This 207-nucleotide RNA was probed chemically with DMS and 2A3. It was measured as part of the RMDB library OK3TST. For DMS, 8,487 sequencing reads were counted. 2A3 adducts were read by reverse transcription with SuperScript II with manganese. Values cover nucleotides 27 to 156. Conditions: 150 mM KOAc, 10 mM MgCl2 and 150 mM bicine (pH 8.5), 24 C.
[RMDB]
RNA sequence: GGGAACGACUCGAGUAGAGUCGAAAACAGACAAGUAUCCUGUUGUGCACAUUGGGAAACGCUAUCUGAAUUCAGGAGGUGAGUUAGAUACUGGAAGAAAAGUUUAAUGCAAGUUAUAAAGACUAAUGAAACAACCAUUUUUGUAGAUGUAGUAACAAUAGUAUUUACGUUUCGACGUAAAUACUAUAAAAGAAACAACAACAACAAC
Reactivity to DMS in 0.01 (KOAc 150mM, MgCl2 10mM, bicine 150mM(pH8.5), 24C), signal-to-noise 4, nucleotides 027 to 156: c040a100g010a090c050a060a130g010u000a100u000c020c030u000g010u010u000g030u000g050c090a090c040a120u000u000g010g000g000a070a060a050c060g000c020u010a040u000c030u020g020a080a160u010u010c040a070g040g020a070g030g030u010g010a080g030u010u000a070g010a120u000a050c050u000g010g020a070a070g030a060a060a050a120g010u000u000u000a030a070u000g020c060a060a080g020u010u000a100u000a100a060a140g000a090c040u000a040a080u000g000a120a060a040c070a040a100c050c030a150u000u000u000u000u000g020u000a040g010a120u010g010u000a070g020u000a050a060c080a090
Reactivity to 2A3 in 0.01 (KOAc 150mM, MgCl2 10mM, bicine 150mM(pH8.5), 24C), signal-to-noise 6, nucleotides 027 to 156: c040a010g160a030c030a070a070g050u040a080u080c000c010u050g020u080u070g020u080g010c050a020c030a110u040u140g040g000g000a040a070a030c040g000c020u040a060u040c020u050g080a110a080u090u070c030a060g030g010a030g050g050u040g020a070g010u040u040a020g020a030u080a100c030u050g020g050a040a010g010a040a130a030a010g050u090u130u160a070a020u100g030c030a020a040g010u070u080a120u070a170a100a010g040a000c030u050a050a070u090g040a110a020a010c020a030a020c030c020a060u080u090u000u030u110g080u060a040g010a100u070g030u060a060g020u070a050a000c020a060